[RMDB]
RNA sequence: GGGAACGACUCGAGUAGAGUCGAAAAGCGUCAUGUGUAUAAAUCUUACGCUACGCAUUAUUGAUGCGUUAGUGAAGCAGAGUCGCAUGACGGAAGUAGCGAUCUCUGCUUUAAAGAUCGCAUAAAAGGGAUUUUCUUACUUCGGUAAGAAAAUCCCAAAAGAAACAACAACAACAAC
Reactivity to 2A3 in 0.01 (KOAc 150mM, MgCl2 10mM, bicine 150mM(pH8.5), 24C), signal-to-noise 2, nucleotides 027 to 126: g080c010g020u010c030a020u000g020u000g030u020a010u080a220a160a180u020c070u040u030a060c010g000c000u000a000c000g000c000a020u000u140a120u150u300g080a000u000g000c000g010u020u080a000g010u000g040a070a020g010c090a000g010a050g110u020c000g000c010a000u080g000a030c020g000g000a020a000g160u190a050g000c000g060a080u000c050u080c190u150g200c000u090u090u060a000a070a000g020a050u040c030g000c080a020u020a070a070a000a010

Chemical mapping of a 177-nucleotide RNA with 2A3. The data come from the RNA Mapping Database (RMDB), library OK1LIB. Reactivities are given for positions 27 through 126. The RNA was probed in 150 mM KOAc, 10 mM MgCl2 and 150 mM bicine (pH 8.5) at 24 C. For 2A3, 802 sequencing reads were counted.